[RMDB]
RNA sequence: GGGAACGACUCGAGUAGAGUCGAAAAAUCAGCCUUCGUUCUGUAAACGGUGUUGGAUCCGACUCUCAUAGGCUCUCCAACCCAACUCCUACUCAAUACGUCCUCGUCGUACAGAACGGUAACAUGUAAAACGAAGGCUGCUUCGGCAGCCUUCGAAGGUCUAUUGAUUCUUCGGAAUCAAUAGACCAAAAGAAACAACAACAACAAC
Reactivity to 2A3 in 0.01 (KOAc 150mM, MgCl2 10mM, bicine 150mM(pH8.5), 24C), signal-to-noise 1, nucleotides 027 to 156: a000u110c040a010g040c000c020u080u150c010g000u000u010c010u010g010u050a040a070a070c060g000g000u090g010u080u000g030g030a140u280c000c010g170a130c050u060c030u020c090a220u180a130g000g030c020u000c000u000c010c000a000a000c000c010c010a010a000c030u060c030c020u060a040c000u000c110a020a070u070a190c050g110u080c020c100u110c070g090u030c010g010u010a010c000a010g000a000a010c000g030g000u080a110a030c020a070u100g060u170a050a050a000a070c000g000a000a010g030g030c000u000g000c000u020u020c020g130g000c010a000g000c000c060u000u000c000g000a010a000

Description: An RNA of 207 nucleotides, treated with 2A3 and read out base by base. It was measured as part of the RMDB library M2RFPK. For 2A3, 629 sequencing reads were counted. For 2A3 the reverse transcriptase was SuperScript II with manganese.